Conditions: 150 mM KOAc, 10 mM MgCl2 and 150 mM bicine (pH 8.5), 24 C. Structure probing data (2A3) for a 207-nucleotide construct. Reactivities are given for positions 27 through 156.
[RMDB]
RNA sequence: GGGAACGACUCGAGUAGAGUCGAAAAAGUGAGUAUGGCUCGUUACGACGAGCCAUCCUCACAACGGUUUUCCUAAAUCGUCGUGAGACGGACCUUGGAAAACCUAGUAUUUAAAUAACUAGGUCAAAUUAGCCUAGAUCCUUCGGGAUCUAGGCAAGUAGUAGUGGAGGUUCGCCUCCACUACUACAAAAGAAACAACAACAACAAC
Reactivity to 2A3 in 0.01 (KOAc 150mM, MgCl2 10mM, bicine 150mM(pH8.5), 24C), signal-to-noise 2, nucleotides 027 to 156: a000g000u000g000a000g000u010a000u000g010g000c030u000c000g010u040u050a110c300g020a000c000g000a130g000c000c000a010u000c000c000u010c000a000c000a010a000c050g010g000u000u000u000u000c000c000u000a010a020a010u080c010g020u000c020g000u040g130a140g000a040c000g000g000a010c000c020u010u040g000g000a010a000a000a000c000c000u000a010g030u000a040u060u130u090a090a160a100u120a030a050c080u060a000g000g010u000c040a000a070a190u150u190a050g000c010c000u000a000g000a000u000c010c000u010u070c170g050g000g000a000u000c000u000a000g000g000c000a000a000